Record summary: The data come from the RNA Mapping Database (RMDB), library OK3TST. This 207-nucleotide RNA was probed chemically with 2A3.

[RMDB]
RNA sequence: GGGAACGACUCGAGUAGAGUCGAAAAGUAGUUGCCUAAGAUACAUGUGUGCCCGUCGUGGGCAUUCCUAAAGACGUAGUAGGGCGAGGCGACAAAGGCGCACACCACCCACGUUCCUAGAGAGUUCUUCAUAGCUGCCUUUGUGCUGAUAGGCACCCGAUGUAAGCGUCUUCGGACGCUUACAUCGAAAAGAAACAACAACAACAAC
Reactivity to 2A3 in 0.01 (KOAc 150mM, MgCl2 10mM, bicine 150mM(pH8.5), 24C), signal-to-noise 1, nucleotides 027 to 156: g130u100a040g010u050u070g020c020c010u040a050a060g000a050u170a060c070a100u160g000u010g000u020g010c030c010c020g040u160c080g050u300g000g050g000c040a040u060u050c020c000u040a040a040a020g050a030c070g100u090a030g040u020a070g060g000g010c030g000a060g010g040c000g000a020c060a010a090a020g020g000c000g010c000a020c010a030c110c000a040c040c040c000a050c010g000u030u040c000c000u030a000g020a000g000a020g080u040u020c000u080u000c030a130u090a160g000c040u060g010c000c000u060u050u070g040u070g000c000u010g020a090u080a110g020g010c020a010c000c020

Reactivities are given for positions 27 through 156.
The reactions ran in a buffer of 150 mM KOAc, 10 mM MgCl2 and 150 mM bicine (pH 8.5), at 24 C.
Values are in units of 0.01, from 0 to 300, in steps of 10.